An RNA of 207 nucleotides, treated with 2A3 and read out base by base.
Reactivities are given for positions 27 through 156.
The 2A3 profile rests on 1,008 reads.
Conditions: 150 mM KOAc, 10 mM MgCl2 and 150 mM bicine (pH 8.5), 24 C.
RNA sequence: GGGAACGACUCGAGUAGAGUCGAAAAGCUGGGCUUCGGAAGAGGGCGUGAGAGAUCCAGCCUACCGAUUCAGCUUCGCCUUCCGGCCUGAAUCGGGAAAACUCAGGAAGGCUGUGGGAGAGGACACCCUGCCCGUGGGAGGUCCCUCCCGAGAGCGGACACUACAUCACUUCGGUGAUGUAGUGUCAAAAGAAACAACAACAACAAC
Reactivity to 2A3 in 0.01 (KOAc 150mM, MgCl2 10mM, bicine 150mM(pH8.5), 24C), signal-to-noise 1, nucleotides 027 to 156: g020c020u010g040g020g030c030u100u050c090g020g050a170a040g000a170g050g060g000c050g040u160g020a150g010a000g010a030u050c030c030a010g050c010c000u000a010c000c000g000a000u000u000c000a000g000c000u000u070c070g000c000c000u000u000c000c000g000g000c020c080u010g020a000a000u010c000g000g000g000a030a010a000a000c150u170c110a020g000g000a000a000g000g020c010u050g250u100g010g000g000a010g020a120g030g000a000c000a040c000c000c010u050g010c000c000c090g080u170g000g000g000a140g020g080u000c000c000c000u000c010c000c000g000a000g000a000g000c110g050